[RMDB]
RNA sequence: GGGAACGACUCGAGUAGAGUCGAAAAAGAGAAAUAGUCAAGCCCAAGGUCCCUCCCAAACCUCCAGUGAAACUGGACAUUGAGGGACCCAGGAGCACAGAGGGAUUCACUGCUCCAGCUGUGGUUCGAAUAAUGGUGGGUUCGCCCACCAUUAUUCAAAAGAAACAACAACAACAAC
Reactivity to 2A3 in 0.01 (KOAc 150mM, MgCl2 10mM, bicine 150mM(pH8.5), 24C), signal-to-noise 6, nucleotides 027 to 126: a010g140a010g040a030a110a070u230a050g140u130c100a050a020g030c010c000c010a020a010g020g000u010c020c000c000u030c050c070c020a050a140a120c000c020u000c010c000a020g010u110g250a160a080a130c010u010g010g000a020c010a060u100u230g000a000g000g000g000a000c020c010c000a010g000g020a030g030c020a000c020a030g060a050g030g040g010a020u170u140c090a070c140u130g030c020u000c000c000a020g010c020u020g020u070g020g190u030u090c070
Reactivity to DMS in 0.01 (KOAc 150mM, MgCl2 10mM, bicine 150mM(pH8.5), 24C), signal-to-noise 4, nucleotides 027 to 126: a030g000a300g000a060a050a020u030a050g010u000c060a120a070g000c000c000c020a200a190g000g000u040c010c000c010u030c000c300c150a100a130a140c300c190u000c000c010a010g030u010g050a150a070a290c000u010g000g000a020c140a130u010u010g010a010g000g010g020a000c000c000c120a030g000g010a030g010c000a010c070a020g000a080g000g000g000a050u010u000c070a080c130u020g020c170u020c000c000a050g030c020u010g010u010g000g010u000u000c090
Conditions: 150 mM KOAc, 10 mM MgCl2 and 150 mM bicine (pH 8.5), 24 C.
Structure probing data (2A3 and DMS) for a 177-nucleotide construct.
For DMS the reverse transcriptase was MarathonRT.
It was measured as part of the RMDB library OK1LIB.
For 2A3, 4,549 sequencing reads were counted.
For 2A3 the reverse transcriptase was SuperScript II with manganese.
Reactivities are given for positions 27 through 126.
For DMS, 4,160 sequencing reads were counted.